Structure probing data (DMS) for a 177-nucleotide construct. The reactions ran in a buffer of 150 mM KOAc, 10 mM MgCl2 and 150 mM bicine (pH 8.5), at 24 C. Values are in units of 0.01, from 0 to 300, in steps of 10. The data come from the RNA Mapping Database (RMDB), library TTRDEL. For DMS, 567 sequencing reads were counted. DMS adducts were read by reverse transcription with MarathonRT.
[RMDB]
RNA sequence: GGGAACGACUCGAGUAGAGUCGAAAAGAUAUGGACGUCAUGAAGCGAGGUCGGAAACGACUCCCCACCGCUCAUGCGCGUCCUAAGUCAAAAUCUGAAUAGCUGGGUUCGCCCAGCUAUUCAGAAAGUGUCUACUUCUGUUCGCAGAAGUAGACACAAAAGAAACAACAACAACAAC
Reactivity to DMS in 0.01 (KOAc 150mM, MgCl2 10mM, bicine 150mM(pH8.5), 24C), signal-to-noise 1, nucleotides 027 to 126: g000a100u000a300u040g000g000a070c000g010u000c000a020u000g000a060a050g000c000g010a070g020g020u010c030g000g030a120a100a190c020g020a050c000u020c020c000c060c030a300c010c030g000c040u000c000a000u000g030c230g010c020g000u000c040c000u000a000a140g000u030c020a040a030a100a070u000c010u000g000a020a010u000a000g030c020u000g040g000g020u000u020c300g010c000c000c010a000g000c000u000a000u020u000c000a000g010a000a020a020